[RMDB]
RNA sequence: GGGAACGACUCGAGUAGAGUCGAAAAGAUAUGGAAAUGACCGAUAAGGUACAUUCGGAAACGAAUGAAUACCUUUUGACGGUUCAUUUCCUAAGUCAAAAGCGCCGUACGUUCGCGUACGGCGCAACACAUCGUAAAUGUUCGCAUUUACGAUGUGAAAAGAAACAACAACAACAAC
Reactivity to 2A3 in 0.01 (KOAc 150mM, MgCl2 10mM, bicine 150mM(pH8.5), 24C), signal-to-noise 2, nucleotides 027 to 126: g000a000u040a010u050g000g000a000a000a030u010g010a020c000c040g070a160u100a300a050g010g010u010a010c000a000u000u000c000g000g010a020a020a020c000g000a010a000u020g000a090a120u060a030c010c000u030u090u130u240g120a030c000g000g010u130u170c010a000u000u000u010c000c000u000a010a020g010u000c000a000a060a180a150g010c030g020c020c010g010u030a000c010g030u050u140c300g000c010g100u000a010c000g000g000c000g000c010a010a000
Reactivity to DMS in 0.01 (KOAc 150mM, MgCl2 10mM, bicine 150mM(pH8.5), 24C), signal-to-noise 2, nucleotides 027 to 126: g010a020u000a140u000g000g000a000a000a000u000g000a030c010c000g020a070u010a040a010g000g010u000a060c000a000u010u010c000g010g000a030a050a100c000g000a020a000u000g000a200a150u010a020c000c000u000u000u000u010g010a280c040g000g000u000u010c000a000u000u000u000c000c000u000a010a050g000u010c030a110a080a140a110g010c010g000c020c000g000u000a010c000g040u000u010c290g000c020g040u010a000c020g000g020c000g030c000a000a030